[RMDB]
RNA sequence: GGGAACGACUCGAGUAGAGUCGAAAACUGGGCUGCACGCGUGCUACAAUGUUAGGAUCAAUAGGACUGCGAGCCUGAGAGGGUGCGCUACUCUUAUAAUCCCUAACGUAGUUGGGAUUGACGUUUGUAAUCAGCGUCAUGAACCAGGAAUCCCUUGCGAUCGAUACUACUUCGGUAGUAUCGAUCGAAAAGAAACAACAACAACAAC
Reactivity to 2A3 in 0.01 (KOAc 150mM, MgCl2 10mM, bicine 150mM(pH8.5), 24C), signal-to-noise 1, nucleotides 027 to 156: c010u010g030g070g060c020u190g070c100a070c090g030c010g130u140g020c000u000a000c050a140a300u300g010u010u000a000g000g010a010u020c010a030a020u170a000g000g000a000c010u010g010c010g040a020g000c000c000u040g030a050g020a010g030g010g000u090g000c030g000c000u060a030c010u000c000u000u000a020u000a090a040u100c000c000c020u010a020a020c000g000u010a010g010u010u050g070g000g010a000u000u040g030a020c080g060u020u100u170g090u130a100a150u200c010a010g040c000g020u000c000a000u000g000a020a060c000c000a000g010g000a020a110u000c000c000c000u000u100g010